The data come from the RNA Mapping Database (RMDB), library VIROID. Structure probing data (DMS and 2A3) for a 177-nucleotide construct.
[RMDB]
RNA sequence: GGGAACGACUCGAGUAGAGUCGAAAACGGAUCACUUUCCUGUGGUUCCUGUGGUUACACCUCGGAAGGCCGCCGCGGACCUGCAAAGAAGAAGAUAGGGGCAGAGGGGGAGUGAGCCUCGUCGUCGCCUUACUCAGAUGUUCGCAUCUGAGUAAGGAAAAGAAACAACAACAACAAC
Reactivity to DMS in 0.01 (KOAc 150mM, MgCl2 10mM, bicine 150mM(pH8.5), 24C), signal-to-noise 1, nucleotides 027 to 126: c140g000g000a060u000c030a000c100u000u000u000c050c010u000g000u000g000g010u000u010c000c000u010g030u010g030g030u010u000a150c150a190c030c010u020c070g000g020a300a130g000g020c070c020g000c050c040g010c070g020g000a030c040c000u010g000c140a070a140a130g000a110a070g000a100a120g000a130u020a030g010g010g000g020c030a050g020a180g010g000g000g000g000a040g000u010g000a040g010c010c010u000c140g020u000c060g000u000c100g010
Reactivity to 2A3 in 0.01 (KOAc 150mM, MgCl2 10mM, bicine 150mM(pH8.5), 24C), signal-to-noise 1, nucleotides 027 to 126: c040g010g010a030u010c010a030c040u090u130u110c010c030u070g040u130g020g060u000u130c000c000u050g040u070g040g000u050u040a080c060a060c070c030u040c010g100g040a060a000g080g000c020c000g050c000c020g040c030g040g040a170c050c050u020g000c060a140a070a060g080a120a030g030a050a010g050a140u110a100g060g030g040g000c000a020g080a040g090g000g020g030g020a010g060u030g020a000g020c020c010u000c030g060u050c000g030u030c060g020
The RNA was probed in 150 mM KOAc, 10 mM MgCl2 and 150 mM bicine (pH 8.5) at 24 C. Values cover nucleotides 27 to 126.